[RMDB]
RNA sequence: GGGAACGACUCGAGUAGAGUCGAAAAGGUACGAUGAGAAAAACGCAGAGGCGGGCCCCUCUGUGGGUUCACAAUAAGGGCUUCAUUGCAUGGACUCUGACCUCUUGUGCUCCUUUUGGGCUCAUUCUAAUUGACAGGCCAUUUGUAGCUCUGAGCACGUGAUAUUUAUCUUCGGAUAAAUAUCACGAAAAGAAACAACAACAACAAC
Reactivity to DMS in 0.01 (KOAc 150mM, MgCl2 10mM, bicine 150mM(pH8.5), 24C), signal-to-noise 1, nucleotides 027 to 156: g000g030u010a040c040g020a120u000g010a140g000a070a090a050a100a120c010g010c030a030g020a050g010g000c060g000g020g010c040c100c020c060u000c060u000g040u010g010g030g020u010u010c050a040c070a090a110u000a090a040g000g010g010c010u000u010c050a120u010u010g000c080a300u000g010g020a040c000u000c020u010g010a060c010c000u000c050u010u000g030u030g020c010u000c020c050u010u000u010u010g000g040g000c000u000c030a100u000u010c080u040a030a110u010u030g020a170c020a040g020g080c010c000a160u010u000u010g000u000a110g010c010u000c060u010g000a090g000c030a300
Reactivity to 2A3 in 0.01 (KOAc 150mM, MgCl2 10mM, bicine 150mM(pH8.5), 24C), signal-to-noise 2, nucleotides 027 to 156: g060g010u050a030c050g010a050u110g030a060g060a130a140a080a060a000c030g010c010a010g000a010g030g030c160g010g020g000c000c020c010c000u040c010u020g000u070g010g000g000u100u130c010a020c000a050a090u160a080a080g090g010g020c020u150u080c030a040u000u120g020c020a040u090g030g050a110c010u000c020u110g140a180c010c030u080c000u060u050g020u030g020c020u070c000c000u070u090u130u170g040g000g030c020u000c010a040u150u040c050u070a110a180u140u070g070a050c060a040g010g010c010c010a040u110u030u090g060u020a010g020c020u000c030u070g040a020g000c090a000

The record gives the reactivity of an RNA of 207 nucleotides to DMS and 2A3. The 2A3 profile rests on 936 reads. The RNA was probed in 150 mM KOAc, 10 mM MgCl2 and 150 mM bicine (pH 8.5) at 24 C.